[RMDB]
RNA sequence: GGGAACGACUCGAGUAGAGUCGAAAACCUCGGCAAUGCUUAUCAGCCGAGGGUUAGCCGAUCCUAAGGCCCGUCGUAAUUCGAGCGGGUCAAAAGGGAAACUGGUUAAUAUUCCAGUGCCACCGUACAUAGACAGUUCGUUCGCGAACUGUCUAUGAAAAGAAACAACAACAACAAC
Reactivity to DMS in 0.01 (KOAc 150mM, MgCl2 10mM, bicine 150mM(pH8.5), 24C), signal-to-noise 4, nucleotides 027 to 126: c000c000u000c000g000g030c010a170a060u020g020c170u040u030a110u010c140a110g020c020c000g000a020g000g000g010u000u000a030g000c010c030g000a070u000c000c000u000a160a290g010g000c010c010c000g000u000c010g000u030a170a170u030u030c030g010a090g020c020g000g000g000u010c010a010a020a100a140g010g000g030a010a090a030c040u030g020g000u000u000a030a020u010a210u010u010c010c000a080g000u020g000c050c110a090c080c080g010u020a140
Reactivity to 2A3 in 0.01 (KOAc 150mM, MgCl2 10mM, bicine 150mM(pH8.5), 24C), signal-to-noise 8, nucleotides 027 to 126: c000c000u010c000g000g000c090a080a070u100g040c100u160u260a190u290c050a070g170c000c000g000a000g010g010g000u000u030a020g000c000c010g020a080u040c010c000u060a120a050g000g000c000c000c000g020u020c010g030u090a080a260u250u160c010g000a040g070c000g000g000g000u000c000a010a010a010a070g040g000g000a090a140a040c080u090g000g010u020u010a050a010u060a100u110u040c000c000a030g040u050g100c010c020a080c000c030g030u050a040